[RMDB]
RNA sequence: GGGAACGACUCGAGUAGAGUCGAAAACGACCACAUGCUCGGAAGGAGGAGAUCAUGGCCGGGCCGGCCUGGGCUGCCGAAGCUCAGCAGCUCUGAAGUCCUUUGUGUAAGUCGCGCCGCCUUUUGGGUACCGUCCAUAGUUCGCUAUGGACGGUACAAAAGAAACAACAACAACAAC
Reactivity to 2A3 in 0.01 (KOAc 150mM, MgCl2 10mM, bicine 150mM(pH8.5), 24C), signal-to-noise 5, nucleotides 027 to 126: c020g050a040c020c000a060c030a050u130g010c010u010c050g040g050a040a020g050g040a010g030g030a070g010a020u110c040a100u110g050g000c010c010g030g040g010c020c040g030g020c020c010u040g000g040g000c010u010g010c010c020g070a080a020g020c030u020c050a010g000c010a000g010c000u010c010u050g100a060a020g040u020c000c000u030u060u030g100u020g020u060a080a050g020u020c010g000c020g010c030c010g020c000c010u050u060u080u070g100g000
Reactivity to DMS in 0.01 (KOAc 150mM, MgCl2 10mM, bicine 150mM(pH8.5), 24C), signal-to-noise 3, nucleotides 027 to 126: c100g000a160c010c040a070c130a090u030g010c020u010c020g010g000a130a090g020g020a080g000g010a060g010a120u010c060a080u020g010g030c020c020g010g000g030c060c050g010g000c040c060u020g000g020g010c000u010g020c010c040g000a090a060g020c090u000c040a130g020c030a050g010c010u000c010u020g000a140a150g000u000c020c020u000u010u000g000u020g060u010a100a080g000u000c000g030c130g000c020c010g000c050c010u010u000u000u050g000g000

An RNA of 177 nucleotides, treated with 2A3 and DMS and read out base by base.
The reactions ran in a buffer of 150 mM KOAc, 10 mM MgCl2 and 150 mM bicine (pH 8.5), at 24 C.
DMS adducts were read by reverse transcription with MarathonRT.